[RMDB]
RNA sequence: GGGAACGACUCGAGUAGAGUCGAAAAGAUAUGGAUUCUGGCCUGGCAACAGCCAAGGUCGGAAACGACUUGGACAUGCCAGGGAAUCCUAAGUCAAAACACGGACAGACUUCGGUCUGUCCGUGAACGAAAUUAAGUGCUUCGGCACUUAAUUUCGAAAAGAAACAACAACAACAAC
Reactivity to 2A3 in 0.01 (KOAc 150mM, MgCl2 10mM, bicine 150mM(pH8.5), 24C), signal-to-noise 2, nucleotides 027 to 126: g000a000u000a010u040g020g010a000u000u110c060u260g300g010c030c000u000g020g110c250a300a070c040a300g000c010c000a000a010g250g140u070c000g000g050a010a010a000c010g000a020c000u010u010g000g000a040c070a260u300g070c010c000a000g000g000g010a000a000u000c000c000u000a060a040g000u010c020a000a010a060a130c010a010c020g000g000a000c000a000g020a000c000u120u210c300g020g000u000c010u050g000u020c000c000g010u000g010a000a000
Reactivity to DMS in 0.01 (KOAc 150mM, MgCl2 10mM, bicine 150mM(pH8.5), 24C), signal-to-noise 1, nucleotides 027 to 126: g010a010u000a130u010g000g000a010u000u000c010u000g010g020c020c010u000g000g010c000a110a070c190a280g000c000c020a010a000g000g010u000c000g020g000a010a030a040c010g000a050c000u000u000g000g000a010c060a170u000g010c030c010a000g000g000g000a030a000u000c000c000u010a030a090g000u000c010a110a130a210a280c020a000c000g010g000a020c020a000g000a020c000u000u000c290g030g000u000c000u000g030u000c000c000g010u000g000a010a070
Source: RMDB library TTRDEL, as collected in RNAgym. Chemical mapping of a 177-nucleotide RNA with 2A3 and DMS. For DMS the reverse transcriptase was MarathonRT. Reactivities are given for positions 27 through 126. The RNA was probed in 150 mM KOAc, 10 mM MgCl2 and 150 mM bicine (pH 8.5) at 24 C.